[RMDB]
RNA sequence: GGGAACGACUCGAGUAGAGUCGAAAAAACGGAAGUUGUCUUGAUGCAUAGUUUACUGUUGACUUUCUUCCAGUAUUCAUGGAAAACUAUCAUAGAGCACUGUUCUGUCAGUUGCCCAGGAUCCUCAUGUCCUCCAAAGGUUCGCCUUUGGAGGACAAAAAGAAACAACAACAACAAC
Reactivity to DMS in 0.01 (KOAc 150mM, MgCl2 10mM, bicine 150mM(pH8.5), 24C), signal-to-noise 1, nucleotides 027 to 126: a060a060c030g010g020a050a090g030u010u000g000u040c000u000u000g000a070u010g010c150a010u000a020g010u000u000u000a100c050u010g000u000u000g010a030c210u010u000u000c100u000u000c120c040a050g000u000a050u000u000c040a060u000g000g000a080a040a050a040c020u000a000u000c000a040u000a120g000a080g010c030a050c020u000g010u010u010c060u000g010u010c070a070g000u000u000g000c050c000c010a100g000g000a120u000c050c040u000c070a170